[RMDB]
The data come from the RNA Mapping Database (RMDB), library M2PK50.
Chemical mapping of a 177-nucleotide RNA with DMS and 2A3.

RNA sequence: GGGAACGACUCGAGUAGAGUCGAAAAGCGGUACACUUCGGUGUACCGCAAAACCGGAAUAAACAUGGGCCCAUGAGCCGAAACGGAAGGGCGUCCGCCGAAAAACGACGCCGUUCGCGGCGUCGAAGUAUAUAUUUUACUUCGGUAAAAUAUAUACAAAAGAAACAACAACAACAAC
Reactivity to DMS in 0.01 (KOAc 150mM, MgCl2 10mM, bicine 150mM(pH8.5), 24C), signal-to-noise 4, nucleotides 027 to 126: g020c000g010g010u000a010c010a010c010u000u020c180g020g000u000g010u000a010c020c000g010c000a000a010a060a100c090c000g000g000a080a090u000a080a090a070c090a120u010g010g000g000c010c010c040a100u010g020a150g020c010c000g010a030a080a130c090g000g020a080a050g010g000g000c020g000u010c020c020g010c040c040g010a050a050a040a110a160c020g010a010c000g010c010c010g020u000u000c140g020c030g020g010c020g020u000c010g010a010a030
Reactivity to 2A3 in 0.01 (KOAc 150mM, MgCl2 10mM, bicine 150mM(pH8.5), 24C), signal-to-noise 3, nucleotides 027 to 126: g020c000g020g000u010a000c020a010c010u030u140c150g030g000u000g000u000a000c000c020g010c000a000a000a000a000c020c000g040g060a150a160u220a070a110a010c070a100u110g030g010g060c010c020c010a050u110g040a050g060c020c030g040a220a200a050c090g010g040a030a040g080g010g020c020g070u030c040c000g020c000c040g020a060a040a030a020a040c010g010a000c010g020c070c010g010u020u020c210g000c000g070g030c020g000u010c000g000a010a000

For 2A3 the reverse transcriptase was SuperScript II with manganese.